[RMDB]
RNA sequence: GGGAACGACUCGAGUAGAGUCGAAAAUGAUGGAGUGUGUGUGUCUGUAUUUGUGUGUCUGUGUGUAUUGAGAGAGAAAGAUUUGCAAUUGACACCAUUGUGGGAGCUGGUAAAUCUAAAAUCUGCAAGGCAAGCCAGCAGGCUAAAAAGUCAAUGAGGUGAGCAUUAUAUUCGUAUAAUGCUCACCAAAAGAAACAACAACAACAAC
Reactivity to DMS in 0.01 (KOAc 150mM, MgCl2 10mM, bicine 150mM(pH8.5), 24C), signal-to-noise 1, nucleotides 027 to 156: u000g020a110u040g010g020a090g070u010g010u000g020u000g000u030g000u000c000u000g050u000a120u000u000u010g020u010g000u020g010u000c050u000g040u010g040u000g040u000a070u000u000g010a200g000a140g010a120g020a090a090a130g010a070u000u000u000g030c040a060a070u000u010g040a130c030a050c000c020a140u000u030g060u000g000g000g010a150g070c030u000g020g030u010a000a080a050u000c030u000a030a050a080a140u000c040u000g000c050a080a060g000g000c140a080a120g050c080c060a070g040c300a060g010g000c010u020a030a030a040a030a050g030u000c060a050a060u010g000a300
Reactivity to 2A3 in 0.01 (KOAc 150mM, MgCl2 10mM, bicine 150mM(pH8.5), 24C), signal-to-noise 2, nucleotides 027 to 156: u130g040a010u030g030g040a030g020u020g000u010g000u000g020u000g010u060c040u020g060u060a130u050u090u040g090u020g000u000g020u000c020u070g030u030g010u010g020u040a070u090u190g040a090g020a010g010a000g030a040a120a020g070a060u070u090u090g000c020a030a080u080u060g010a030c020a010c040c020a030u020u100g010u060g030g020g000a030g020c010u000g000g030u070a040a040a020u040c020u080a000a000a030a100u030c020u020g000c020a020a030g020g000c010a010a010g010c010c000a000g010c020a000g000g000c000u000a050a010a010a010a000g030u030c010a010a040u060g000a020